Source information
Chemical mapping of a 177-nucleotide RNA with DMS and 2A3. 2A3 is a SHAPE reagent: it acylates the 2'-hydroxyl of flexible nucleotides of all four kinds. The DMS profile rests on 14,325 reads. 2A3 adducts were read by reverse transcription with SuperScript II with manganese.
RNA sequence: GGGAACGACUCGAGUAGAGUCGAAAACAAUCAAUUGCGAAAAAACAGCCUCGGUGUAGCGGCUGUAACCUUUCUCGUCGUCUCUGCGGCAGCGCCUUUGACUGCCGUAGCCGGCGGCGUGCCGCUAUAAAUGGUAAAAUUUCGAUUUUACCAUUUAAAAAGAAACAACAACAACAAC
Reactivity to DMS in 0.01 (KOAc 150mM, MgCl2 10mM, bicine 150mM(pH8.5), 24C), signal-to-noise 8, nucleotides 027 to 126: c090a110a100u020c130a070a090u010u010g010c040g010a000a070a070a090a100a070c070a070g000c020c020u000c070g010g020u010g010u010a060g020c110g000g010c010u000g010u000a030a060c120c060u000u000u000c030u000c010g020u000c010g010u000c010u010c010u000g000c000g000g010c000a020g010c040g010c300c220u000u000u010g010a110c010u000g010c010c010g020u000a000g020c160c130g010g000c000g010g000c010g020u000g010c080c010g000c020u000a100
Reactivity to 2A3 in 0.01 (KOAc 150mM, MgCl2 10mM, bicine 150mM(pH8.5), 24C), signal-to-noise 5, nucleotides 027 to 126: c030a010a080u150c040a050a140u170u160g020c030g100a120a080a020a010a020a030c000a010g020c010c010u060c060g140g030u210g060u160a020g010c010g020g000c010u030g020u030a020a030c010c010u020u120u060c050u010c010g000u010c000g010u010c010u000c000u020g000c000g010g000c000a000g000c010g090c050c070u240u170u210g080a230c000u000g000c000c000g000u000a000g000c000c030g000g000c000g000g010c000g000u010g010c000c000g010c000u020a030